RNA sequence: GGGAACGACUCGAGUAGAGUCGAAAAGAUAUGGACCCAUCUGGCUAGCGUGUGUAUCGGAAACGAUACCACGCUUGGACCCAGUGGGUCCUAAGUCAAAAGGACCCUGCCUUCGGGCAGGGUCCAAGAAGACACUAAAGUUCGCUUUAGUGUCUUCAAAAGAAACAACAACAACAAC
Reactivity to DMS in 0.01 (KOAc 150mM, MgCl2 10mM, bicine 150mM(pH8.5), 24C), signal-to-noise 2, nucleotides 027 to 126: g000a040u010a300u000g000g020a020c000c000c000a030u020c040u000g010g020c120u000a010g010c000g010u010g010u030g020u000a000u010c010g020g000a140a110a250c000g010a010u000a000c000c000a000c000g020c000u010u000g000g010a130c300c010c000a050g040u000g000g000g000u000c010c000u000a010a070g010u010c050a090a080a240a200g000g010a030c000c000c000u000g000c000c010u000u000c250g040g000g010c020a020g000g000g000u000c000c000a010a030
An RNA of 177 nucleotides, treated with DMS and read out base by base.
DMS adducts were read by reverse transcription with MarathonRT.
It was measured as part of the RMDB library TTRDES.
For DMS, 2,713 sequencing reads were counted.